[RMDB]
RNA sequence: GGGAACGACUCGAGUAGAGUCGAAAAGCCGGGUUCUACGACCCAACGGAGGACGUGUGAAAUAUGCCGGACCCCUCCGCUCACAAGGGCAACGACGGCGACGACAGCACGACCAAAUCGACGCGGACACCACUCCUAGGUUCGCCUAGGAGUGGUGAAAAGAAACAACAACAACAAC
Reactivity to DMS in 0.01 (KOAc 150mM, MgCl2 10mM, bicine 150mM(pH8.5), 24C), signal-to-noise 2, nucleotides 027 to 126: g050c000c000g020g010g000u010u000c020u040a060c090g000a170c010c010c000a200a070c090g020g050a100g000g000a100c000g000u010g010u040g000a060a080a140u020a170u000g050c030c040g040g010a200c070c020c010c000u020c010c000g030c020u010c060a120c190a040a090g000g010g000c050a040a160c050g040a230c070g030g000c010g010a030c100g000a040c090a130g000c000a060c080g000a060c030c040a050a100a060u010c160g010a110c150g000c050g020g000a270
Reactivity to 2A3 in 0.01 (KOAc 150mM, MgCl2 10mM, bicine 150mM(pH8.5), 24C), signal-to-noise 1, nucleotides 027 to 126: g020c020c000g000g020g040u010u010c090u120a020c020g040a050c030c000c000a070a060c070g100g040a130g000g010a010c040g030u060g000u040g090a010a130a050u300a080u180g070c010c000g030g110a100c040c000c000c010u010c010c040g020c010u050c000a130c010a020a160g000g030g000c070a100a080c020g130a010c060g000g010c000g010a040c070g010a000c050a020g010c050a000c020g070a060c040c030a030a110a010u100c010g060a040c050g030c000g100g000a000
Structure probing data (DMS and 2A3) for a 177-nucleotide construct. For DMS the reverse transcriptase was MarathonRT. For 2A3, 1,047 sequencing reads were counted. Source: RMDB library OK2TST, as collected in RNAgym. The reactions ran in a buffer of 150 mM KOAc, 10 mM MgCl2 and 150 mM bicine (pH 8.5), at 24 C. In probing experiments dimethyl sulfate is read out at A N1 and C N3, which are open when not base-paired. 2A3 adducts were read by reverse transcription with SuperScript II with manganese.